[RMDB]
RNA sequence: GGGAACGACUCGAGUAGAGUCGAAAAAAUUGGCGGGGGAGCACUACAACCGGAGGAGCCUGCGGUUUAAUUGGACUCAACGCCGGACAUCUCACCAGCAUCGACAGCAGGAGUGACGAUCAGGUUGGAUAUCACAGUUGUUCGCAACUGUGAUAUCAAAAGAAACAACAACAACAAC
Reactivity to DMS in 0.01 (KOAc 150mM, MgCl2 10mM, bicine 150mM(pH8.5), 24C), signal-to-noise 1, nucleotides 027 to 126: a000a110u030u010g000g050c020g000g000g010g010g000a070g000c170a050c080u010a090c220a050a070c020c060g010g000a110g060g000a150g010c060c000u000g000c070g010g000u000u000u010a090a160u000u010g000g000a130c010u010c030a080a060c060g000c040c010g020g010a070c120a040u010c040u000c030a090c100c050a030g020c040a070u000c110g000a060c140a100g000c030a040g000g000a070g010u000g020a130c070g000a040u010c070a040g000g030u000u000g010
An RNA of 177 nucleotides, treated with DMS and read out base by base. The data come from the RNA Mapping Database (RMDB), library RFMREP. DMS adducts were read by reverse transcription with MarathonRT.